[RMDB]
Source information: This 177-nucleotide RNA was probed chemically with DMS and 2A3. For DMS, 2,274 sequencing reads were counted. The reactions ran in a buffer of 150 mM KOAc, 10 mM MgCl2 and 150 mM bicine (pH 8.5), at 24 C. The data come from the RNA Mapping Database (RMDB), library 15KREP.
RNA sequence: GGGAACGACUCGAGUAGAGUCGAAAAGAUGGGCCGCUUCCGGCAAGAGGGGCCGAAAGUGUGAAGGGAGAGACCGCUCCGAGAGUUGGGAGAAGAAAGAGAGCGAAUGUGUCCGGAGGGAACCCCCGACCUAUUAUACGUUCGCGUAUAAUAGGUCAAAAGAAACAACAACAACAAC
Reactivity to DMS in 0.01 (KOAc 150mM, MgCl2 10mM, bicine 150mM(pH8.5), 24C), signal-to-noise 3, nucleotides 027 to 126: g020a120u000g010g000g010c020c030g010c020u000u000c010c030g000g000c040a090a150g020a110g010g000g000g000c010c020g020a030a040a030g010u000g010u010g020a120a100g020g000g000a080g010a110g000a070c100c060g010c020u010c040c050g000a090g000a080g010u000u000g020g010g020a100g010a080a120g000a040a080a090g000a090g000a060g020c050g000a100a080u010g010u000g010u000c040c040g020g020a110g010g000g000a090a160c010c000c010c030c090
Reactivity to 2A3 in 0.01 (KOAc 150mM, MgCl2 10mM, bicine 150mM(pH8.5), 24C), signal-to-noise 2, nucleotides 027 to 126: g040a030u070g000g010g030c010c000g010c000u050u000c020c020g020g000c010a030a010g140a030g050g040g050g050c020c010g010a030a050a010g050u080g030u050g100a090a080g030g000g010a090g010a010g020a070c000c020g040c020u000c020c050g070a070g000a020g130u200u120g030g000g010a090g000a070a030g050a000a090a000g100a000g000a000g010c010g030a070a090u080g040u030g000u030c000c030g030g030a050g030g000g000a030a040c000c000c000c010c030